The record gives the reactivity of an RNA of 207 nucleotides to DMS and 2A3. Values cover nucleotides 27 to 156. Conditions: 150 mM KOAc, 10 mM MgCl2 and 150 mM bicine (pH 8.5), 24 C.

RNA sequence: GGGAACGACUCGAGUAGAGUCGAAAAGAAUUAUCCUCAUUUUACCUAUGAGAGAAAUGGGACUCUGAGACAGAAAGCAUCUUGCCCAAGGUUACACAGGUUGUACUUAGUAAGGUCAGUCUUUGAAGCUGGCUCUGCAAAUUCAAAAGCUGGUACAUAAUAGUAGCAUCUUCGGAUGCUACUAUUAAAAAGAAACAACAACAACAAC
Reactivity to DMS in 0.01 (KOAc 150mM, MgCl2 10mM, bicine 150mM(pH8.5), 24C), signal-to-noise 1, nucleotides 027 to 156: g010a070a090u010u010a100u010c020c010u000c040a080u030u000u000u020a140c080c100u030a030u010g000a090g010a200g010a000a100a120u000g000g000g000a100c030u020c040u000g000a140g020a170c080a110g000a170a120a100g000c050a300u010c050u010u000g010c010c020c040a060a050g020g010u000u000a020c020a040c040a050g000g050u000u000g010u000a040c050u010u000a100g070u010a040a050g010g020u000c010a040g000u000c000u000u000u000g010a060a130g020c040u010g000g000c020u000c050u000g000c030a050a080a100u000u000c040a050a000a110a090g010c050u000g000g040u000a020c040a130
Reactivity to 2A3 in 0.01 (KOAc 150mM, MgCl2 10mM, bicine 150mM(pH8.5), 24C), signal-to-noise 2, nucleotides 027 to 156: g030a000a110u250u140a090u140c000c010u010c040a040u020u180u150u080a080c000c010u080a140u130g030a070g000a010g050a060a160a050u070g040g000g030a040c010u000c050u180g060a040g010a040c030a040g080a030a120a000g030c020a030u040c010u030u040g100c030c020c020a010a000g040g010u070u140a010c090a000c030a040g050g020u040u010g010u090a030c010u050u040a070g020u010a090a010g030g000u000c010a000g030u020c000u100u110u170g040a050a000g030c020u010g020g000c010u010c020u070g030c040a070a080a260u090u040c020a150a110a010a060g020c020u000g000g030u000a050c010a020